[RMDB]
RNA sequence: GGGAACGACUCGAGUAGAGUCGAAAAGCGUGCGGGAUGAAGCGUCUUGACGUGUAAACCGCUGUCAGGGGGUCGAACCAAUGAUUGCCCCCAGAGGAAGUGGCGACUAACUCUGUGCCAGCAGUCGGAAUGAAAUCAGGUUCGCCUGAUUUCAUUCAAAAGAAACAACAACAACAAC
Reactivity to 2A3 in 0.01 (KOAc 150mM, MgCl2 10mM, bicine 150mM(pH8.5), 24C), signal-to-noise 2, nucleotides 027 to 126: g080c060g030u080g010c040g000g030g000a130u300g040a140a010g010c010g010u000c010u160u230g180a020c010g030u020g000u040a010a000a010c000c000g020c070u030g080u060c060a060g040g020g030g030g000u040c030g030a010a010c000c020a030a040u140g030a030u020u040g020c000c030c000c000c050a020g010a020g030g010a050a030g010u050g140g080c110g040a000c020u010a040a010c000u000c020u040g040u060g030c000c020a000g000c000a000g030u020c040g090
Reactivity to DMS in 0.01 (KOAc 150mM, MgCl2 10mM, bicine 150mM(pH8.5), 24C), signal-to-noise 3, nucleotides 027 to 126: g000c060g020u010g000c020g000g000g000a000u010g010a210a300g010c000g000u000c060u000u010g000a020c010g000u010g020u010a020a300a300c010c000g010c010u000g000u010c150a190g020g010g000g000g010u000c070g010a050a250c030c010a090a070u000g010a050u000u000g010c000c050c070c020c000a020g000a020g000g010a080a070g000u000g010g010c210g020a040c060u000a070a300c040u010c010u000g000u000g000c020c140a120g010c050a020g010u010c010g020